[RMDB]
RNA sequence: GGGAACGACUCGAGUAGAGUCGAAAAGAUAUGGAGCUCUUGGACCUUGCGAUAUCAUAUAAUUGAGCUGUGUGUCGGAAACGACACCAGUAUAUAUAUGAUAUCGCAAGCUAGAGCUCCUAAGUCACACGUAUCAUGUCUUCGGACAUGAUACGUGAAAAGAAACAACAACAACAAC
Reactivity to 2A3 in 0.01 (KOAc 150mM, MgCl2 10mM, bicine 150mM(pH8.5), 24C), signal-to-noise 1, nucleotides 027 to 126: g010a010u090a070u230g010g010a010g030c010u040c010u060u160g180g190a300c090c000u000u000g000c000g000a000u000a000u000c000a000u000a000u030a130a300u200u300g230a250g190c040u020g260u010g000u000g010u260c030g110g010a130a070a070c030g000a000c000a000c000c010a000g000u000a050u000a000u000a000u000a000u230g000a000u000a000u030c000g000c000a030a000g010c000u010a000g000a000g000c000u000c000c000u010a000a000g010u010c000a000
Reactivity to DMS in 0.01 (KOAc 150mM, MgCl2 10mM, bicine 150mM(pH8.5), 24C), signal-to-noise 1, nucleotides 027 to 126: g010a110u000a300u020g000g020a060g040c000u000c000u000u000g050g000a100c300c010u000u000g010c000g020a000u000a010u000c000a010u010a000u010a010a300u010u070g010a130g000c010u000g040u010g010u010g040u000c000g000g000a080a130a270c010g000a010c000a010c020c020a050g010u000a130u020a100u000a020u000a000u000g010a000u010a010u000c000g010c000a000a010g010c020u000a000g000a010g050c000u000c000c000u010a000a050g000u000c050a300